Source information
An RNA of 177 nucleotides, treated with DMS and 2A3 and read out base by base. For DMS the reverse transcriptase was MarathonRT. It was measured as part of the RMDB libraries RFM100 and RFMREP. Reactivities are given for positions 27 through 126. Conditions: 150 mM KOAc, 10 mM MgCl2 and 150 mM bicine (pH 8.5), 24 C.
RNA sequence: GGGAACGACUCGAGUAGAGUCGAAAAAGCCGCAUCGAGGAUACGUCCUCGAUGCGGCAAGGGAGGAGGGAGGAGAUGGGCCACGUUCCCUCUGCCUGGAACGCCCUUCCCCCCCUUCUUCACCUAAAUUACGUCUUAAGUUCGCUUAAGACGUAAUAAAAGAAACAACAACAACAAC
Reactivity to DMS in 0.01 (KOAc 150mM, MgCl2 10mM, bicine 150mM(pH8.5), 24C), signal-to-noise 4, nucleotides 027 to 126: a090g010c000c000g010c000a010u010c010g030a010g030g030a040u000a070c280g020u000c000c020u000c000g010a010u020g040c000g010g020c000a010a000g000g010g000a010g010g000a010g010g000g020a060g000g010a050g000a020u010g000g000g010c110c300a120c090g010u000u000c000c000c060u010c100u030g010c140c090u020g010g000a020a020c050g000c010c000c010u000u000c000c010c000c020c000c000c000u000u000c010u010u000c010a090c010c010u000a040a130
Reactivity to 2A3 in 0.01 (KOAc 150mM, MgCl2 10mM, bicine 150mM(pH8.5), 24C), signal-to-noise 7, nucleotides 027 to 126: a000g000c000c010g030c000a010u000c010g010a010g030g000a010u030a070c260g100u050c000c000u000c010g010a000u000g010c000g010g010c000a000a000g010g000g000a010g010g000a020g010g060g000a140g030g020a150g020a090u040g010g000g020c080c080a160c090g010u000u010c010c030c020u080c120u100g090c030c050u030g010g000a000a000c010g030c000c000c000u000u020c010c000c000c000c010c000c000u000u010c000u000u010c030a090c000c000u050a170a220